[RMDB]
An RNA of 207 nucleotides, treated with DMS and 2A3 and read out base by base. The DMS profile rests on 2,895 reads. The reactions ran in a buffer of 150 mM KOAc, 10 mM MgCl2 and 150 mM bicine (pH 8.5), at 24 C. For 2A3, 1,723 sequencing reads were counted.

RNA sequence: GGGAACGACUCGAGUAGAGUCGAAAAAGCUUUAGCAGGAUCGCAAGCGCCAUCGAUCCCACGAUCUCAAAAAUGGCCAACUUGCGCAAAGCUACAGAAGAACUUGAUAAGGCAUGGGCUUUGGGGCUUGUUCCGGAUAAGGAAUUUUUCCGCCUGGCUACUGUAUUUCUUUCGAGAAAUACAGUAGAAAAGAAACAACAACAACAAC
Reactivity to DMS in 0.01 (KOAc 150mM, MgCl2 10mM, bicine 150mM(pH8.5), 24C), signal-to-noise 1, nucleotides 027 to 156: a080g030c010u000u010u000a050g000c000a100g000g010a120u010c000g020c000a010a040g020c030g010c010c000a030u010c030g000a120u000c010c020c060a110c170g020a080u010c000u020c100a010a090a090a090a040u000g010g020c000c000a090a050c000u000u000g010c020g000c100a080a040a140g020c050u010a300c090a090g000a120a070g010a050a060c010u020u000g010a100u020a070a060g010g000c020a090u000g010g000g030c030u000u000u010g020g010g010g010c040u000u010g000u000u000c020c000g000g020a100u020a060a080g010g010a080a060u000u000u000u010u010c030c030g010c030c030u020g030g050
Reactivity to 2A3 in 0.01 (KOAc 150mM, MgCl2 10mM, bicine 150mM(pH8.5), 24C), signal-to-noise 3, nucleotides 027 to 156: a000g070c050u060u030u040a020g020c040a030g040g040a070u130c020g000c010a000a010g000c020g020c050c000a020u030c060g040a030u040c000c010c020a060c110g030a040u010c030u040c160a110a110a070a010a010u010g000g000c000c010a020a010c020u000u010g000c010g010c040a020a010a020g030c010u070a090c030a060g090a120a010g030a060a030c020u100u120g020a080u160a190a030g030g000c040a010u070g000g040g000c020u060u030u050g020g000g000g040c000u020u040g010u050u000c010c010g010g030a090u080a080a030g020g020a030a030u110u030u050u120u000c010c000g020c000c010u020g050g000
The data come from the RNA Mapping Database (RMDB), library OK3TST.